[RMDB]
RNA sequence: GGGAACGACUCGAGUAGAGUCGAAAAUAUUCUGGUAAUCCUUGGCCUGUGUAUAAUGCAAAGAAGCUUAGCCUCUAUGCAAGUUCUCAUUUCCUUGGGAAAAAGCUGUCUCAACUGGAAUCAGCUAGAUACCAGAAAGUUUCGACUUUCUGGUAUCAAAAGAAACAACAACAACAAC
Reactivity to DMS in 0.01 (KOAc 150mM, MgCl2 10mM, bicine 150mM(pH8.5), 24C), signal-to-noise 4, nucleotides 027 to 126: u010a080u010u000c040u000g020g010u000a090a110u000c020c020u000u000g000g010c030c020u000g030u010g020u000a050u000a080a090u000g010c030a020a130a050g000a060a060g000c020u000u010a150g000c020c050u000c020u010a100u000g000c040a060a110g010u000u010c020u010c010a100u010u000u000c050c030u000u010g020g000g010a040a070a080a100a070g020c020u000g010u000c070u020c050a100a080c140u020g000g010a090a090u010c040a030g000c050u010a070
Reactivity to 2A3 in 0.01 (KOAc 150mM, MgCl2 10mM, bicine 150mM(pH8.5), 24C), signal-to-noise 2, nucleotides 027 to 126: u100a050u050u050c020u050g030g010u040a050a090u060c020c000u020u060g040g010c000c000u000g000u010g030u030a020u050a140a100u090g020c030a060a020a070g050a080a030g030c010u070u090a030g030c020c000u000c000u020a050u070g000c010a010a080g040u020u030c010u010c020a040u010u070u020c030c000u040u040g000g010g030a040a050a060a030a000g000c010u020g010u010c000u000c060a110a190c060u090g010g050a050a050u080c010a000g000c020u030a060